Description: Chemical mapping of a 177-nucleotide RNA with 2A3. The reactions ran in a buffer of 150 mM KOAc, 10 mM MgCl2 and 150 mM bicine (pH 8.5), at 24 C. The data come from the RNA Mapping Database (RMDB), library OK1LIB.
[RMDB]
RNA sequence: GGGAACGACUCGAGUAGAGUCGAAAACGCCGGUGAAUUCAAUCAGGCCGAGACCACCUUCAUACUUCGGAGCGCACGUGCCGAUUGGAAACUGCGGUCGUUCACCGCAAGCGGUGCGGAAGUGUUCCAGUCCCGCCACUUUCGAGUGGCGGGACUGAAAAGAAACAACAACAACAAC
Reactivity to 2A3 in 0.01 (KOAc 150mM, MgCl2 10mM, bicine 150mM(pH8.5), 24C), signal-to-noise 1, nucleotides 027 to 126: c040g000c000c000g000g000u070g070a160a230u160u090c130a160a060u070c040a140g170g000c000c000g040a010g070a070c000c000a010c030c000u050u160c030a070u040a150c040u050u130c010g000g010a000g000c010g030c000a070c070g030u020g030c000c000g030a040u040u090g020g050a000a220a070c010u140g000c010g000g000u040c100g040u080u190c000a140c040c020g000c020a080a080g010c030g010g000u000g030c060g010g030a130a040g000u000g090u130u050c000